Notes:
The record gives the reactivity of an RNA of 177 nucleotides to DMS and 2A3. For DMS the reverse transcriptase was MarathonRT.
RNA sequence: GGGAACGACUCGAGUAGAGUCGAAAAGAACAGGAUAACAGGACGCAAGAUAGGAAGUUCAGAUGAAUGGAGAAGAGCCGUAACUCGACAACAACGGCAGCGUCCUGAAGAAUUUACGGCUCGAGAAGAUCGUAUGACGAUUCGUCGUCAUACGAUCAAAAGAAACAACAACAACAAC
Reactivity to DMS in 0.01 (KOAc 150mM, MgCl2 10mM, bicine 150mM(pH8.5), 24C), signal-to-noise 4, nucleotides 027 to 126: g000a090a130c120a100g000g010a070u060a060a150c010a010g000g020a000c020g000c010a150a090g050a160u010a150g010g000a090a090g010u030u000c150a120g000a090u040g010a080a040u000g000g000a180g040a210a050g000a010g020c010c000g010u000a010a060c200u000c060g000a090c240a030a050c210a070a130c060g000g100c140a040g000c000g020u000c000c000u000g010a010a080g000a060a030u020u000u000a010c010g000g000c000u010c000g000a060g020a120a050
Reactivity to 2A3 in 0.01 (KOAc 150mM, MgCl2 10mM, bicine 150mM(pH8.5), 24C), signal-to-noise 3, nucleotides 027 to 126: g060a060a010c050a040g130g070a100u090a230a000c000a010g000g000a000c000g000c000a070a100g070a170u120a090g160g070a080a040g030u070u080c060a010g040a140u130g130a120a070u150g110g000a050g020a130a020g010a050g000c000c000g000u000a010a030c000u020c100g110a010c050a170a050c010a050a000c030g130g000c030a000g000c010g010u000c000c000u000g000a000a020g000a000a030u040u050u050a000c010g000g000c000u000c000g000a020g030a020a060
Conditions: 150 mM KOAc, 10 mM MgCl2 and 150 mM bicine (pH 8.5), 24 C.
Source: RMDB library OK1LIB, as collected in RNAgym.